[RMDB]
RNA sequence: GGGAACGACUCGAGUAGAGUCGAAAAGCUCGCUGUGGGCACCGCCGUACCGUAACUUCACCAUCGGGCUGGUCCUGGUGGUCACACUGGUCGCCUUCGAGGCGAUGGGAGUGGCCACUGCACUGCCCACCAUAGCCUCCGAACUGGACGGCCAGCGCACAAGCAGUACAUUCGUGUACUGCUUGUGAAAAGAAACAACAACAACAAC
Reactivity to 2A3 in 0.01 (KOAc 150mM, MgCl2 10mM, bicine 150mM(pH8.5), 24C), signal-to-noise 4, nucleotides 027 to 156: g020c020u020c050g020c050u040g000u070g010g050g000c010a040c040c050g050c030c000g040u080a160c020c000g040u070a080a110c110u130u140c110a060c070c000a090u120c050g000g040g000c060u140g050g010u060c010c060u070g000g000u000g000g020u030c000a010c010a000c030u100g060g000u000c010g000c000c000u060u210c190g100a200g010g000c020g000a000u020g040g000g040a160g010u100g000g000c000c020a030c000u020g020c040a070c110u050g000c000c000c010a000c000c000a050u090a080g010c000c000u040c050c040g070a200a160c080u190g020g050a100c070g020g000c000c010a020g000c020g000
Reactivity to DMS in 0.01 (KOAc 150mM, MgCl2 10mM, bicine 150mM(pH8.5), 24C), signal-to-noise 1, nucleotides 027 to 156: g070c040u020c120g070c050u000g080u030g010g000g040c000a030c080c040g030c020c040g030u000a080c000c010g010u000a090a140c070u000u010c070a080c080c080a140u000c020g000g000g000c040u020g030g000u000c010c030u000g030g040u030g000g000u010c020a040c030a050c060u010g030g040u010c000g050c030c010u010u000c210g000a200g010g050c030g010a010u000g000g000g000a200g040u000g030g010c010c010a180c020u000g000c070a050c050u010g030c000c000c000a070c010c050a130u010a100g010c000c000u010c020c100g000a140a110c160u000g030g000a120c090g050g010c010c010a040g000c060g030